[RMDB]
RNA sequence: GGGAACGACUCGAGUAGAGUCGAAAAGCUCUAGGAGACUAGAGCAAUACGUACGCGCGAUCGUGUCACUGAACUCAGAUAGCCAGUUCAGAGGCUGUCAAAGGACAUAGCUAUAGCUAUGUCCAAAGACGAUAGAUAGCUUCGGCUAUCUAUCGUCAAAAGAAACAACAACAACAAC
Reactivity to 2A3 in 0.01 (KOAc 150mM, MgCl2 10mM, bicine 150mM(pH8.5), 24C), signal-to-noise 3, nucleotides 027 to 126: g000c000u000c000u010a030g000g000a080g060a060c010u000a000g000a000g020c000a000a000u020a000c000g010u010a020c010g020c000g000c030g050a020u060c060g010u030g060u080c030a020c120u070g030a070a010c010u000c080a030g020a180u050a010g010c030c000a040g020u120u070c030a040g020a030g080g000c010u020g060u050c000a040a020a120g010g000a000c010a000u000a000g000c020u120a060u080a300g000c010u000a010u020g000u000c000c000a000a010a000
Reactivity to DMS in 0.01 (KOAc 150mM, MgCl2 10mM, bicine 150mM(pH8.5), 24C), signal-to-noise 1, nucleotides 027 to 126: g000c000u000c000u000a000g000g000a180g000a140c040u010a020g030a000g050c000a040a010u030a090c050g000u030a050c020g000c030g000c070g020a040u000c000g100u010g000u010c040a030c050u000g010a010a040c020u000c060a010g000a000u020a010g050c060c000a090g070u000u000c110a090g000a050g000g000c000u000g010u000c030a120a020a120g010g020a000c000a010u000a000g030c000u050a200u080a210g020c000u000a000u000g020u000c000c000a050a020a070